[RMDB]
RNA sequence: GGGAACGACUCGAGUAGAGUCGAAAAGAUAUGGACUUGGAGUGGAGACAACAGCCACACCUGUCGGAAACGACAGUUGUGGACAUGUCUCGCCAAGUCCUAAGUCAAAUCUUCCGUUCGCGGAAGAGAUGCGAACUCGGUUCGCCGAGUUCGCAUCAAAAGAAACAACAACAACAAC
Reactivity to DMS in 0.01 (KOAc 150mM, MgCl2 10mM, bicine 150mM(pH8.5), 24C), signal-to-noise 1, nucleotides 027 to 126: g000a000u020a300u000g000g010a030c000u000u000g010g000a070g000u000g020g000a010g010a010c020a100a100c300a230g020c010c000a000c000a010c060c000u000g020u000c020g000g000a030a150a230c010g000a000c000a000g000u010u000g030u010g030g000a040c130a060u010g000u000c000u000c000g010c030c000a010a030g030u000c000c000u010a020a010g000u000c050a100a170a190u000c010u000u010c010c030g000u020u010c240g000c000g070g010a030a030g010a010
Reactivity to 2A3 in 0.01 (KOAc 150mM, MgCl2 10mM, bicine 150mM(pH8.5), 24C), signal-to-noise 1, nucleotides 027 to 126: g060a020u040a040u090g000g000a000c010u010u020g030g030a030g170u300g220g080a000g170a000c040a230a040c090a300g020c000c000a010c000a000c000c000u000g010u000c020g010g020a030a030a020c000g000a000c000a010g000u000u030g000u010g070g000a010c020a040u260g000u000c000u000c010g010c000c000a010a010g000u020c000c000u000a020a020g000u020c010a040a000a210u020c000u000u000c020c020g030u030u090c300g000c020g140g000a000a020g000a060
This 177-nucleotide RNA was probed chemically with DMS and 2A3. For DMS, 934 sequencing reads were counted. The reactions ran in a buffer of 150 mM KOAc, 10 mM MgCl2 and 150 mM bicine (pH 8.5), at 24 C.